Structure probing data (2A3 and DMS) for a 207-nucleotide construct. Conditions: 150 mM KOAc, 10 mM MgCl2 and 150 mM bicine (pH 8.5), 24 C. It was measured as part of the RMDB library OK3TST. DMS adducts were read by reverse transcription with MarathonRT.
[RMDB]
RNA sequence: GGGAACGACUCGAGUAGAGUCGAAAAUGCACAAAAUUUCUUCCGUUUUGGUGACUUUGUCAUGAAUAAUUUUAUAUUGUUUUUGACAUGGUUAUUUAGUAUGCUAAGUUUGUUGCGUACUUCUAUUAAGAAACGGGAUGUGAAGGUCAUCGCAAUGAGGUAUAUAUCAUUUCGAUGAUAUAUACCUAAAAGAAACAACAACAACAAC
Reactivity to 2A3 in 0.01 (KOAc 150mM, MgCl2 10mM, bicine 150mM(pH8.5), 24C), signal-to-noise 7, nucleotides 027 to 156: u110g010c050a030c030a050a090a110a130u080u190u050c010u050u020c010c000g010u000u000u020u060g040g000u040g000a000c000u010u010u010g000u000c000a000u010g010a010a000u010a020a000u020u070u160u240a290u150a030u160u010g000u000u010u010u020u000g000a000c000a000u010g000g000u020u010a030u040u100u010a020g010u000a010u030g000c030u040a100a140g130u130u150u140g120u130u090g020c000g000u000a020c000u030u030c020u030a270u200u140a140a040g010a020a010a000c010g000g000g030a020u080g040u030g060a050a030g040g030u070c040a040u090c090g030c090a040a100u280g040
Reactivity to DMS in 0.01 (KOAc 150mM, MgCl2 10mM, bicine 150mM(pH8.5), 24C), signal-to-noise 3, nucleotides 027 to 156: u000g000c020a120c050a040a070a070a140u000u010u000c030u000u000c020c010g020u000u000u010u000g010g030u000g000a000c010u000u010u000g000u010c010a020u000g000a020a020u010a010a000u010u000u010u020a210u010a040u050u010g010u000u000u000u000u000g010a020c010a030u000g010g000u000u000a020u000u010u000a000g010u010a030u000g020c010u010a070a170g020u000u010u000g030u010u010g020c000g040u000a040c040u000u000c080u000a150u010u000a110a210g000a010a030a020c010g020g000g020a040u000g000u000g010a120a090g000g000u000c040a090u010c080g010c090a060a170u000g010